[RMDB]
RNA sequence: GGGAACGACUCGAGUAGAGUCGAAAAUGUGUAUGACCUUAAAUGCCCAGGACAUUUAUAAUAGGCUUUGCCUAAAUUCAUACCCCUGAGGCCCAGACUGUCAAGCUUUCACAGAAAAACCUGGGACCAAGUAACGACGAUUCGUCGUCGUUACUUGAAAAGAAACAACAACAACAAC
Reactivity to DMS in 0.01 (KOAc 150mM, MgCl2 10mM, bicine 150mM(pH8.5), 24C), signal-to-noise 3, nucleotides 027 to 126: u010g010u000g020u000a010u010g000a050c300c110u000u010a010a030a050u000g010c030c010c070a070g010g000a250c010a020u000u000u000a040u000a100a150u010a050g030g000c000u010u010u000g010c010c000u000a010a090a170u010u000c020a030u020a050c030c050c030c040u010g000a130g000g020c010c030c020a040g010a210c050u000g010u000c120a070a120g010c200u000u000u000c100a040c070a070g000a040a070a070a070a170c050c000u000g000g000g020a150c100
Reactivity to 2A3 in 0.01 (KOAc 150mM, MgCl2 10mM, bicine 150mM(pH8.5), 24C), signal-to-noise 1, nucleotides 027 to 126: u090g090u020g020u060a020u040g030a040c000c010u030u000a010a040a040u030g000c010c010c050a050g020g040a020c010a020u040u100u040a090u030a160a210u080a000g000g020c030u140u080u300g000c000c000u020a030a030a020u160u040c000a010u030a050c000c010c010c000u020g060a020g120g000c050c020c010a020g020a020c000u010g030u100c030a100a000g030c000u110u140u150c080a040c010a000g110a180a100a030a010a010c010c000u010g020g000g000a010c020

The record gives the reactivity of an RNA of 177 nucleotides to DMS and 2A3.
For DMS the reverse transcriptase was MarathonRT.